[RMDB]
RNA sequence: GGGAACGACUCGAGUAGAGUCGAAAAAAUAAUGUAAUACAAAAGGAAUUAUUGGUACGUAUUUUAAAUCAGAGCGGUGAGCUCUGCGCCGCGGCAAAAUUUAUUCGCAUAGUGCAGCAACUGGGCCAACGGUAUUGACAUUCGUGUCAAUACCGUUAAAAGAAACAACAACAACAAC
Reactivity to DMS in 0.01 (KOAc 150mM, MgCl2 10mM, bicine 150mM(pH8.5), 24C), signal-to-noise 1, nucleotides 027 to 126: a060a000u000a030a040u000g000u000a090a170u050a280c020a030a050a100a120g000g020a100a120u000u000a050u000u000g000g000u020a000c030g040u010a030u000u000u030u000a030a100a120u000c050a060g000a130g000c020g000g090u020g000a230g010c010u020c030u010g010c130g030c000c060g000c040g000g020c130a030a040a040a070u000u020u000a070u000u000c060g000c050a040u040a060g000u020g010c010a050g020c070a030a070c110u000g000g010g000c060c110